Notes:
Chemical mapping of a 177-nucleotide RNA with DMS and 2A3. The RNA was probed in 150 mM KOAc, 10 mM MgCl2 and 150 mM bicine (pH 8.5) at 24 C. Values cover nucleotides 27 to 126. Source: RMDB library OK2TST, as collected in RNAgym. For DMS the reverse transcriptase was MarathonRT.
RNA sequence: GGGAACGACUCGAGUAGAGUCGAAAAACGCUGUGAGCAUCGUGACGUGAGUGUUGCGCCUUGCUAGGCUCGCCGGAAGUCUCAGCUAUUAAGGAGGCCUUGUUGCGCCACGCGUGGGGCUAGCGGCAUAGCAAGACGUGUUCGCACGUCUUGCUAUAAAAGAAACAACAACAACAAC
Reactivity to DMS in 0.01 (KOAc 150mM, MgCl2 10mM, bicine 150mM(pH8.5), 24C), signal-to-noise 2, nucleotides 027 to 126: a140c090g030c040u000g020u000g010a090g010c020a080u000c030g010u000g000a040c050g010u010g010a130g020u010g020u000u000g020c070g000c090c050u010u000g010c020u010a070g000g000c020u000c070g000c040c070g000g000a150a030g000u010c000u000c090a060g020c010u000a270u020u000a060a100g010g010a110g010g010c000c080u000u010g010u010u010g030c070g010c020c010a070c090g000c090g030u000g010g000g000g020c010u000a090g000c000g020g000c050
Reactivity to 2A3 in 0.01 (KOAc 150mM, MgCl2 10mM, bicine 150mM(pH8.5), 24C), signal-to-noise 2, nucleotides 027 to 126: a020c050g000c030u050g000u040g100a030g030c020a010u000c020g020u030g060a060c010g000u060g130a160g060u160g070u100u060g020c010g000c000c020u040u060g020c000u010a020g080g000c060u060c060g120c020c060g040g080a060a010g020u040c000u000c010a020g030c010u060a080u140u170a190a100g100g070a020g020g060c050c040u160u170g210u140u140g070c100g030c020c000a060c050g040c030g070u040g010g020g000g000c000u000a050g010c000g090g000c030